[RMDB]
RNA sequence: GGGAACGACUCGAGUAGAGUCGAAAAACAUCACUUAGUAGAUGAAAAACUACAUGCAAGAAGUACUGGACCAUACUCAUUAGUUACUCAACAGCCACUAGGUGGUAAAGCACAAUUUGGUGGACAACGGAUAGUGGUGGUUCGCCACCACUAUCCGAAAAGAAACAACAACAACAAC
Reactivity to 2A3 in 0.01 (KOAc 150mM, MgCl2 10mM, bicine 150mM(pH8.5), 24C), signal-to-noise 2, nucleotides 027 to 126: a000c020a000u070c000a000c070u080u030a050g050u040a040g030a160u210g110a020a000a050a050a030c010u030a000c010a000u070g070c080a080a060g040a070a000g110u040a050c120u180g040g020a020c010c010a040u020a080c040u060c070a150u030u100a020g010u040u030a050c000u010c030a040a030c000a110g030c000c030a000c000u030a040g080g040u030g000g030u030a010a080a000g020c010a000c060a180a080u070u040u230g070g020u010g010g040a040c030a070a000
Reactivity to DMS in 0.01 (KOAc 150mM, MgCl2 10mM, bicine 150mM(pH8.5), 24C), signal-to-noise 1, nucleotides 027 to 126: a180c180a050u000c000a070c030u010u020a210g060u000a000g000a160u000g000a050a010a030a000a130c000u000a040c300a060u000g000c300a080a010g000a160a010g040u000a060c120u010g040g000a000c070c100a200u000a090c060u000c070a110u000u000a080g000u000u000a030c030u030c020a000a000c130a050g000c020c000a030c000u020a000g000g030u000g000g060u000a060a000a090g110c290a110c010a110a000u020u000u010g000g000u000g010g000a060c130a060a180
Background
The record gives the reactivity of an RNA of 177 nucleotides to 2A3 and DMS. 2A3 adducts were read by reverse transcription with SuperScript II with manganese. DMS adducts were read by reverse transcription with MarathonRT. The 2A3 profile rests on 1,309 reads.